[RMDB]
RNA sequence: GGGAACGACUCGAGUAGAGUCGAAAAUGGGCGAUCGCUCGCUGUUUUUGUGGCUGGCUGUCAGCGGGCUGGAGGAGCCGGGAGCGGAGGCGGAGGACCGAGCCAAAAACGUCAGCCGAGGCCGGGCAAUAUCGUGGACUGUUCGCAGUCCACGAAAGCCUAGACUAUUGUUCGCAAUAGUCUAGGCAAAAGAAACAACAACAACAAC
Reactivity to 2A3 in 0.01 (KOAc 150mM, MgCl2 10mM, bicine 150mM(pH8.5), 24C), signal-to-noise 1, nucleotides 027 to 156: u060g030g010g000c070g080a160u140c110g000c000u020c010g000c010u010g110u060u110u080u030u120g080u030g030g000c040u050g030g000c000u010g000u110c040a030g020c000g010g000g060c030u050g050g020a020g010g030a020g050c060c040g050g000g000a050g010c020g000g030a000g040g010c060g010g010a040g030g000a010c020c020g010a010g000c050c040a050a060a000a020a040c030g000u020c010a020g030c030c010g000a090g000g000c020c000g040g000g000c020a020a120u080a050u170c000g000u000g010g000a000c000u000g030u050u030c050g000c140a000g010u020c010c000a010c000g000a000a000a000